[RMDB]
RNA sequence: GGGAACGACUCGAGUAGAGUCGAAAAGAGAGUACUCACGUGAACACUCGUUCGUGAACGAGAGUACGUGUUCGAUCACUCUCUCUCGAACGAACGUUCACGAGAACGAGAUCGAACGUUCGAGUGUUCUCUCGUGUGUACGAGAUCGAGUGAACACCCAUUGUGGGCAGUUCGCUGCCCACAAUGGAAAAGAAACAACAACAACAAC
Reactivity to 2A3 in 0.01 (KOAc 150mM, MgCl2 10mM, bicine 150mM(pH8.5), 24C), signal-to-noise 2, nucleotides 027 to 156: g130a000g000a020g020u060a040c020u000c030a040c030g000u030g010a010a010c020a040c040u000c000g010u000u030c020g030u060g010a120a070c100g000a010g000a020g030u100a060c060g020u040g030u050u240c100g040a090u110c020a020c020u030c000u000c000u040c020u000c000g010a040a040c000g010a050a010c100g010u000u010c000a010c060g000a000g000a010a010c080g010a010g000a120u120c060g010a050a020c050g010u020u010c020g030a040g040u000g000u030u020c050u000c000u010c030g000u020g000u010g020u080a070c080g010a030g010a220u090c010g010a010g050u060g030a020a000c010a010c000

Structure probing data (2A3) for a 207-nucleotide construct.
It was measured as part of the RMDB library OK3TST.
The reactions ran in a buffer of 150 mM KOAc, 10 mM MgCl2 and 150 mM bicine (pH 8.5), at 24 C.